Structure probing data (DMS and 2A3) for a 177-nucleotide construct. Values are in units of 0.01, from 0 to 300, in steps of 10. Reactivities are given for positions 27 through 126. The data come from the RNA Mapping Database (RMDB), libraries RFM100 and RFMREP.
[RMDB]
RNA sequence: GGGAACGACUCGAGUAGAGUCGAAAAAGAUAGCUCAGUAACACGUGGCCAAACUACCCUCUGGAUCGGGAUAACCUCGGGAAACUGAGGCUAAUCCUGAAUAGCGUUCUCACCCUGGAGUGGGGAGGAAUUACGCAGUUUUCGAACUGCGUAAUUCAAAAGAAACAACAACAACAAC
Reactivity to DMS in 0.01 (KOAc 150mM, MgCl2 10mM, bicine 150mM(pH8.5), 24C), signal-to-noise 4, nucleotides 027 to 126: a040g010a100u020a070g020c020u010c020a040g010u020a070a070c110a080c100g010u020g000g010c020c020a040a100a090c080u000a090c040c010c010u020c040u010g000g030a190u010c000g000g000g010a020u000a100a230c000c000u000c010g020g000g020a070a060a170c000u000g010a030g000g000c020u000a070a060u000c010c000u000g000a010a130u030a070g000c030g000u010u010c000u010c020a130c050c010c050u000g050g010a070g020u030g010g000g000g000a100g000
Reactivity to 2A3 in 0.01 (KOAc 150mM, MgCl2 10mM, bicine 150mM(pH8.5), 24C), signal-to-noise 6, nucleotides 027 to 126: a000g110a090u110a010g010c000u010c040a040g050u110a070a040c020a010c090g040u060g030g010c020c020a060a070a030c030u100a090c020c020c010u020c030u030g100g040a110u070c020g000g000g000a000u010a010a010c000c010u000c000g000g000g010a050a040a020c010u010g000a000g000g000c010u020a070a100u000c000c000u010g000a010a030u070a030g020c020g020u030u000c020u010c030a140c010c000c020u080g080g060a110g080u140g020g020g030g010a030g080